[RMDB]
RNA sequence: GGGAACGACUCGAGUAGAGUCGAAAAUGGUCACAGUCUUCUCGUGGUGCACAUUCUUCAGCGCCUUUACAGUUCCAGUGGCGUUACCCUCACGGAGACGGGUGGAGAUGGUCAGAGAGCCGUCUCCGUUAACAUUAUCUUUCGAGAUAAUGUUAACAAAAGAAACAACAACAACAAC
Reactivity to 2A3 in 0.01 (KOAc 150mM, MgCl2 10mM, bicine 150mM(pH8.5), 24C), signal-to-noise 9, nucleotides 027 to 126: u080g040g010u050c020a010c020a070g040u010c050u090u020c050u060c040g060u050g030g020u050g030c040a040c020a140u120u060c040u150u110c080a030g010c000g020c000c000u050u080u070a100c060a060g020u090u040c050c010a030g010u020g040g000c010g010u010u050a080c000c000c010u050c020a060c060g040g010a020g010a020c040g020g010g020u070g010g000a040g000a030u050g020g030u060c060a060g090a010g010a030g290c010c000g000u000c000u000c000c000
Reactivity to DMS in 0.01 (KOAc 150mM, MgCl2 10mM, bicine 150mM(pH8.5), 24C), signal-to-noise 9, nucleotides 027 to 126: u010g010g010u000c040a060c070a130g010u000c050u000u000c030u000c060g020u000g010g020u000g020c060a080c110a100u000u000c100u010u000c120a100g010c030g010c020c010u000u000u000a080c140a110g010u000u000c030c040a120g010u000g010g000c020g010u000u000a120c030c010c020u000c110a100c070g000g000a040g000a030c040g010g000g020u000g010g000a050g010a050u000g010g010u010c080a180g010a190g010a140g010c000c000g010u000c000u000c000c010
Chemical mapping of a 177-nucleotide RNA with 2A3 and DMS. The 2A3 profile rests on 94,090 reads. For DMS the reverse transcriptase was MarathonRT. The RNA was probed in 150 mM KOAc, 10 mM MgCl2 and 150 mM bicine (pH 8.5) at 24 C.